[RMDB]
An RNA of 207 nucleotides, treated with 2A3 and read out base by base.
RNA sequence: GGGAACGACUCGAGUAGAGUCGAAAAACGGUCGUACGCGACCGAGGCGCGGCUAGGUCGACGGACCGAACAAUGGCAUCCCGCAAUCUGCCAUCCGCCGCGCAGCUUCUUCUCAAACGGUGCGGAAAAAAGUAGGACACCUUCGGGUGUCCUACAACCUCGAUAGGUAGUUCGCUACCUAUCGAGGAAAAGAAACAACAACAACAAC
Reactivity to 2A3 in 0.01 (KOAc 150mM, MgCl2 10mM, bicine 150mM(pH8.5), 24C), signal-to-noise 1, nucleotides 027 to 156: a000c020g000g000u000c010g010u050a020c230g000c030g190a010c010c000g000a050g000g000c000g000c000g000g010c000u000a010g010g000u020c030g100a120c220g150g010a000c000c000g000a000a000c010a000a010u000g000g000c000a020u120c070c010c020g000c020a020a070u010c020u020g000c000c000a000u010c020c010g010c000c000g020c010g000c020a000g000c000u150u100c000u060u020c020u030c070a080a070a060c040g000g030u020g000c010g000g000a080a000a000a040a000a000g040u030a000g010g010a000c000a000c020c000u000u060c210g050g040g000u000g000u000c000c000u000a000c000a000a000
Background:
It was measured as part of the RMDB library M2RFPK. High 2A3 reactivity points to a flexible backbone, as in loops and unpaired stretches.